[RMDB]
RNA sequence: GGGAACGACUCGAGUAGAGUCGAAAACAUAGCGUUUCACAAUGUGCGCCAUUAACAUUGUUUAUGCAAGCACGUUUCGCAAUGUACGGCGCAGAACCAUUGCCAACACAAAUACGCUUCACGAUGUAAAACAUCGGUGCGUUCGCGCACCGAUGAAGCAUGAGUAUGGCUUCGGCCAUACUCAUGCAAAAGAAACAACAACAACAAC
Reactivity to 2A3 in 0.01 (KOAc 150mM, MgCl2 10mM, bicine 150mM(pH8.5), 24C), signal-to-noise 3, nucleotides 027 to 156: c100a070u120a010g010c010g050u030u180u220c110a050c010a010a050u040g020u010g040c000g010c010c050a110u220u200a060a010c000a000u010u040g070u100u110u160a190u210g050c070a060a200g110c140a060c210g010u040u110u090c090g050c010a000a000u010g010u010a030c060g000g020c010g000c000a000g010a010a010c040c020a020u010u020g030c050c020a120a000c050a100c000a120a110a030u220a040c020g020c000u060u130c140a100c120g120a070u060g070u300a010a050a180a030c010a010u000c000g000g000u030g000c000g010u020u050c140g020c000g000c030a000c000c040g000a000u000g000a020a010